[RMDB]
RNA sequence: GGGAACGACUCGAGUAGAGUCGAAAAGAUAUGGAAGAGCUUACCUUUCGCAUCGAUCGUAUGUAACAAGUACUCGGAAACGAGUACCGCCCAUACGGGAGCGAAAGGUAAGUCUCUUCCUAAGUCAGGUAUAGUAAAUGUUCGCAUUUACUAUACCAAAAGAAACAACAACAACAAC
Reactivity to DMS in 0.01 (KOAc 150mM, MgCl2 10mM, bicine 150mM(pH8.5), 24C), signal-to-noise 8, nucleotides 027 to 126: g000a040u000a300u020g000g000a020a000g000a020g010c000u000u000a000c010c000u000u000u000c000g010c000a300u010c200g000a080u010c000g020u000a010u000g000u010a080a120c240a190a100g010u000a000c000u000c000g000g000a120a140a240c010g000a020g010u000a000c000c060g000c300c190c000a010u000a010c000g000g010g000a030g010c000g010a010a000a000g000g010u000a000a000g000u010c010u000c000u000u000c000c000u010a010a060g010u000c060a110
Reactivity to 2A3 in 0.01 (KOAc 150mM, MgCl2 10mM, bicine 150mM(pH8.5), 24C), signal-to-noise 3, nucleotides 027 to 126: g030a020u100a040u130g010g000a010a000g000a030g060c000u020u000a010c010c010u020u000u020c010g000c130a300u300c120g140a080u090c020g000u020a000u020g120u110a160a140c080a280a080g000u010a010c010u000c010g050g000a080a060a050c010g030a000g000u000a000c000c000g020c000c040c010a000u000a020c020g000g000g020a030g000c010g000a000a020a000g010g000u010a000a000g000u000c000u000c000u000u000c000c000u000a000a000g010u010c020a010

The data come from the RNA Mapping Database (RMDB), library TTRINS. An RNA of 177 nucleotides, treated with DMS and 2A3 and read out base by base. The 2A3 profile rests on 11,141 reads. The RNA was probed in 150 mM KOAc, 10 mM MgCl2 and 150 mM bicine (pH 8.5) at 24 C. 2A3 adducts were read by reverse transcription with SuperScript II with manganese.